[RMDB]
RNA sequence: GGGAACGACUCGAGUAGAGUCGAAAAGAUAUGGACGCUGCUUGCAAUGAUGGGUGGAAUAAUGUCGGAAACGACUAUCCACCUUGAGCAACAGCGUCCUAAGUCAAAACUGGUGUUCGCACCAGAAUCAGAUCGGAUAGUUCGCUAUCCGAUCUGAAAAAGAAACAACAACAACAAC
Reactivity to DMS in 0.01 (KOAc 150mM, MgCl2 10mM, bicine 150mM(pH8.5), 24C), signal-to-noise 2, nucleotides 027 to 126: g010a030u000a130u020g000g000a040c000g000c000u020g000c290u010u000g050c000a260a110u000g030a120u010g000g000g010u000g020g000a080a170u010a120a080u000g020u000c000g010g000a020a030a050c010g030a000c010u000a090u010c000c000a030c000c020u010u000g010a100g040c000a010a010c000a000g010c000g010u000c000c010u000a000a040g000u000c010a090a040a090a170c030u000g010g000u000g010u000u000c210g000c020a020c000c000a020g000a080a100
Reactivity to 2A3 in 0.01 (KOAc 150mM, MgCl2 10mM, bicine 150mM(pH8.5), 24C), signal-to-noise 3, nucleotides 027 to 126: g020a010u000a000u030g000g000a010c000g000c010u020g000c070u020u030g000c010a180a300u110g040a090u100g080g000g000u020g010g120a040a030u250a250a180u300g020u010c010g000g020a020a020a000c010g010a010c040u080a150u040c000c000a000c000c000u000u000g020a000g000c020a000a000c000a000g000c000g010u000c000c000u000a000a000g000u030c000a000a020a040a090c010u000g000g010u020g040u070u080c260g020c090a010c000c000a010g000a010a120
The record gives the reactivity of an RNA of 177 nucleotides to DMS and 2A3. Reactivities are given for positions 27 through 126. DMS adducts were read by reverse transcription with MarathonRT. The RNA was probed in 150 mM KOAc, 10 mM MgCl2 and 150 mM bicine (pH 8.5) at 24 C. The data come from the RNA Mapping Database (RMDB), library TTRDEL.